[RMDB]
RNA sequence: GGGAACGACUCGAGUAGAGUCGAAAAUCGAUGGCGUUCGCGCCAUCGAAGAGCCCUACCGCGUAGCACGCGGAUAGGAGUGAAGAUAUCCAAGGCCAUGGAGGAGGCGUGCUUUCGAGCACGCCAACUCUGCGAGUCAAUUCGUUGACUCGCAGAGAAAAGAAACAACAACAACAAC
Reactivity to 2A3 in 0.01 (KOAc 150mM, MgCl2 10mM, bicine 150mM(pH8.5), 24C), signal-to-noise 2, nucleotides 027 to 126: u010c010g000a000u000g000g030c030g050u070u040c210g000c010g000c110c030a000u010c010g000a010a000g000a010g000c010c000c000u000a020c000c010g000c020g050u070a060g090c250a040c080g010c020g000g000a020u020a000g030g030a190g000u050g100a090a060g040a160u160a050u070c020c010a030a030g100g000c030c020a040u090g030g010a010g000g090a060g000g040c010g000u010g010c000u080u010u100c220g070a010g020c000a000c000g030c000c000a000a000
Reactivity to DMS in 0.01 (KOAc 150mM, MgCl2 10mM, bicine 150mM(pH8.5), 24C), signal-to-noise 2, nucleotides 027 to 126: u000c010g000a000u010g020g010c020g020u000u020c170g000c010g000c000c000a010u000c000g020a030a020g020a260g000c040c000c000u000a030c020c000g010c000g030u000a100g010c200a300c000g010c010g000g000a100u000a000g000g000a140g020u000g000a090a080g020a060u040a120u000c010c010a090a040g000g000c060c070a150u000g000g010a050g020g020a150g010g000c000g020u000g000c000u000u020u010c160g020a020g000c000a000c010g000c010c000a000a030
The data come from the RNA Mapping Database (RMDB), library M2PK50. The record gives the reactivity of an RNA of 177 nucleotides to 2A3 and DMS. The reactions ran in a buffer of 150 mM KOAc, 10 mM MgCl2 and 150 mM bicine (pH 8.5), at 24 C. DMS adducts were read by reverse transcription with MarathonRT. For 2A3 the reverse transcriptase was SuperScript II with manganese.